The record gives the reactivity of an RNA of 177 nucleotides to 2A3. For 2A3 the reverse transcriptase was SuperScript II with manganese. Conditions: 150 mM KOAc, 10 mM MgCl2 and 150 mM bicine (pH 8.5), 24 C. The data come from the RNA Mapping Database (RMDB), library RFM100.
RNA sequence: GGGAACGACUCGAGUAGAGUCGAAAAUCAAUGCGUUUGUGCCUAAUCUUUGACUGCAAGAGAAUCAUUGUCAUAGUCAAGCGGUCCGCUAUCUGUGUAGCAUUCUGUUCAAGAUUUGACUUACAUUUUCAGCAGUCGAAUUCGUUCGACUGCUGAAAAAAGAAACAACAACAACAAC
Reactivity to 2A3 in 0.01 (KOAc 150mM, MgCl2 10mM, bicine 150mM(pH8.5), 24C), signal-to-noise 1, nucleotides 027 to 126: u120c030a000a030u060g000c000g050u030u130u300g100u090g070c020c020u060a160a040u000c000u000u000u110g010a000c000u080g000c000a000a000g060a000g050a060a030u060c050a150u170u110g080u060c050a130u010a150g020u100c080a000a000g000c050g000g000u000c030c030g000c000u000a250u030c130u070g060u030g070u130a000g020c000a020u000u000c000u000g010u080u060c050a090a000g020a200u020u000u010g150a090c000u000u060a050c030a090u010u110